[RMDB]
Record summary:
The record gives the reactivity of an RNA of 170 nucleotides to 2A3 and DMS. The RNA was probed in 150 mM KOAc, 10 mM MgCl2 and 150 mM bicine (pH 8.5) at 24 C. For DMS the reverse transcriptase was MarathonRT.
RNA sequence: GGGAACGACUCGAGUAGAGUCGAAAAAUCCUUUAUUGGGGAGUACACUCGAGGAGUGGAAGGCGUUGUUGGGGGGGAGAUGGGCUUACCUACGGGAAUCCCUGGGUCCCCCUGAUGUCCAGUCCCUGCGCCAGAUCGUUCGCGAUCUGGAAAAGAAACAACAACAACAAC
Reactivity to 2A3 in 0.01 (KOAc 150mM, MgCl2 10mM, bicine 150mM(pH8.5), 24C), signal-to-noise 2, nucleotides 027 to 129: a010u020c010c000u040u260u100a250u070u100g000g000g000g000a030g050u040a000c040a000c030u010c010g080a010g070g000a050g020u100g030g100a020a040g040g000c070g040u000u050g040u020u030g040g010g000g000g000g000g000a050g020a000u050g000g000g020c030u080u060a300c000c000u060a050c080g020g020g000a000a040u090c000c000c030u040g020g000g060u010c000c000c000c000c000u050g010a040u060g050u030c000c020a050g040u000c010c030c010u010g000c000g000
Reactivity to DMS in 0.01 (KOAc 150mM, MgCl2 10mM, bicine 150mM(pH8.5), 24C), signal-to-noise 4, nucleotides 027 to 129: a050u020c000c030u010u020u040a130u040u030g020g060g000g010a080g090u080a090c120a050c020u020c080g040a020g000g000a090g050u040g040g000a100a140g000g030c030g080u070u000g040u020u020g000g000g000g000g000g000g000a000g030a080u040g000g060g050c040u040u020a000c000c000u040a140c160g010g020g050a080a050u020c040c000c010u020g000g000g000u020c000c000c000c000c000u050g000a040u010g030u040c000c050a010g010u030c020c000c030u000g020c140g020

High DMS reactivity at an A or C suggests that its Watson-Crick edge is free. Values cover nucleotides 27 to 129.